Annotation: This 177-nucleotide RNA was probed chemically with 2A3. The 2A3 profile rests on 1,048 reads. 2A3 is a SHAPE reagent: it acylates the 2'-hydroxyl of flexible nucleotides of all four kinds.
[RMDB]
RNA sequence: GGGAACGACUCGAGUAGAGUCGAAAAAUUUAAAUGCCAGGACGGUCACCUUUGGGGUGGUGACAAGUGUGAUCACUUGGGUGGUGGCUGUGUUUGCGCAUCUCCCAGGAAUCUCGUUUACCAGAUCCGUACCAUACCGCUUCGGCGGUAUGGUACGAAAAGAAACAACAACAACAAC
Reactivity to 2A3 in 0.01 (KOAc 150mM, MgCl2 10mM, bicine 150mM(pH8.5), 24C), signal-to-noise 2, nucleotides 027 to 126: a000u160u140u120a090a100a000u090g040c000c000a000g000g010a000c010g000g000u000c000a000c000c000u070u160u060g140g000g000g020u040g060g070u030g060a000c010a030a070g210u140g020u010g250a110u040c000a000c030u040u060g140g020g000u050g010g030u020g000g000c020u000g030u020g010u040u060u020g190c170g010c040a020u000c020u010c000c000c000a000g060g050a020a030u050c030u040c090g040u040u220u040a230c000c020a000g000a040u000c000